[RMDB]
RNA sequence: GGGAACGACUCGAGUAGAGUCGAAAAGGGUUACCCUUCGGGGUAACCCAUACGUCCUGGCGGUGCGGCGCCGGCCCCGCCGGGAAGGCCGCCUUUACCUCCUAAAGGAAUCAUUCGUGAUUCCUAAGGAUCAUUCAUGAUUCGUCAUGAAUGAUCCAAAAGAAACAACAACAACAAC
Reactivity to DMS in 0.01 (KOAc 150mM, MgCl2 10mM, bicine 150mM(pH8.5), 24C), signal-to-noise 2, nucleotides 027 to 126: g010g000g000u000u000a010c000c000c010u010u010c180g050g000g020g010u010a010a000c000c000c010a000u000a010c180g010u000c020c000u010g010g010c040g000g020u000g000c190g000g000c030g000c050c040g000g010c020c040c110c140g010c170c040g010g010g000a020a040g010g030c030c040g030c020c060u000u000u010a160c040c020u000c000c020u010a020a090a030g000g000a020a000u000c000a050u020u020c110g010u000g000a030u010u000c000c010u000a050a050
Reactivity to 2A3 in 0.01 (KOAc 150mM, MgCl2 10mM, bicine 150mM(pH8.5), 24C), signal-to-noise 2, nucleotides 027 to 126: g010g000g000u030u020a000c000c000c000u020u060c220g010g000g000g000u010a000a000c000c000c000a000u050a000c020g050u010c010c000u010g010g000c010g000g030u080g120c020g040g030c080g040c090c010g030g010c050c080c040c050g040c020c010g000g020g000a010a010g100g000c010c010g030c020c000u050u100u100a080c000c000u030c000c020u120a220a160a020g000g000a000a010u010c000a000u020u090c150g080u010g020a010u000u000c010c000u010a010a040
The record gives the reactivity of an RNA of 177 nucleotides to DMS and 2A3. Values cover nucleotides 27 to 126.